[RMDB]
RNA sequence: GGGAACGACUCGAGUAGAGUCGAAAAUUGUCGAAGCAAUGGCACAGUCCUAGGCAUCGUUCCUCUAUCCGAUGUUGAAGCAAUGGCACAGUCCUAGGCAUCGGCGGUGUCGAAGCAAUGGCGUAGAGCUGACGAAAUACUUCGGUAUUUCGUCAGCAAAAGAAACAACAACAACAAC
Reactivity to DMS in 0.01 (KOAc 150mM, MgCl2 10mM, bicine 150mM(pH8.5), 24C), signal-to-noise 1, nucleotides 027 to 126: u000u020g020u000c020g070a060a250g000c050a110a080u020g000g000c050a080c140a010g020u000c010c040u000a190g000g010c120a080u000c040g030u000u000c030c020u000c110u000a080u000c000c060g000a050u020g000u000u000g020a150a140g000c090a110a060u000g000g010c120a080c120a110g020u000c040c000u000a060g010g040c010a060u000c030g030g000c110g010g000u000g000u000c040g010a050a110g020c060a000a210u020g010g000c070g020u000a140g020a140
Reactivity to 2A3 in 0.01 (KOAc 150mM, MgCl2 10mM, bicine 150mM(pH8.5), 24C), signal-to-noise 1, nucleotides 027 to 126: u190u050g110u020c050g050a030a000g000c100a000a130u070g040g000c040a070c030a070g120u080c000c030u040a000g000g070c000a000u070c050g060u140u100c060c010u060c060u070a060u000c000c000g040a020u010g060u090u070g000a040a020g040c050a100a130u300g070g040c050a060c040a300g010u150c000c010u020a010g000g070c000a010u060c010g040g000c020g050g000u020g030u060c010g050a080a010g000c000a030a070u070g000g010c050g000u000a000g020a020
This 177-nucleotide RNA was probed chemically with DMS and 2A3. As a SHAPE reagent, 2A3 marks flexible, mostly unpaired nucleotides at the ribose 2'-OH. The 2A3 profile rests on 787 reads. DMS adducts were read by reverse transcription with MarathonRT. For 2A3 the reverse transcriptase was SuperScript II with manganese. The reactions ran in a buffer of 150 mM KOAc, 10 mM MgCl2 and 150 mM bicine (pH 8.5), at 24 C. It was measured as part of the RMDB library VIROID.